[RMDB]
Structure probing data (2A3) for a 207-nucleotide construct. The RNA was probed in 150 mM KOAc, 10 mM MgCl2 and 150 mM bicine (pH 8.5) at 24 C. It was measured as part of the RMDB library RNAMAK.
RNA sequence: GGGAACGACUCGAGUAGAGUCGAAAAUACCGUUCGCGGUACUAACCGAUAUGGAUCGCAGGAAGUUGCCUCGACGAUGAAAUACAUUCGGAAACGAAUGUAUGGAGUCGAGGACCCAACGCUGCGAUCCUAAGUCCGUAUGAGGCUUCGGCCUCAAUGUCAUGUCAGCAUUCGUGCUGACAUGACAAAAAGAAACAACAACAACAAC
Reactivity to 2A3 in 0.01 (KOAc 150mM, MgCl2 10mM, bicine 150mM(pH8.5), 24C), signal-to-noise 2, nucleotides 027 to 156: u040a060c050c010g020u080u130c290g020c030g130g020u050a060c030u060a120a000c040c000g000a000u000a000u010g000g000a000u000c000g000c010a000g130g070a300a070g090u000u020g030c000c000u030c010g020a010c000g290a300u030g000a000a000a000u000a010c000a000u000u000c000g000g020a000a000a000c000g000a000a000u000g000u000a030u000g030g000a010g000u050c000g010a000g020g000a000c020c170c000a040a000c120g000c300u000g000c000g000a000u000c000c000u000a020a000g000u020c020c010g060u240a100u240g010a000g010g000c030u100u140c300g170g000c000c000u010c040a030a020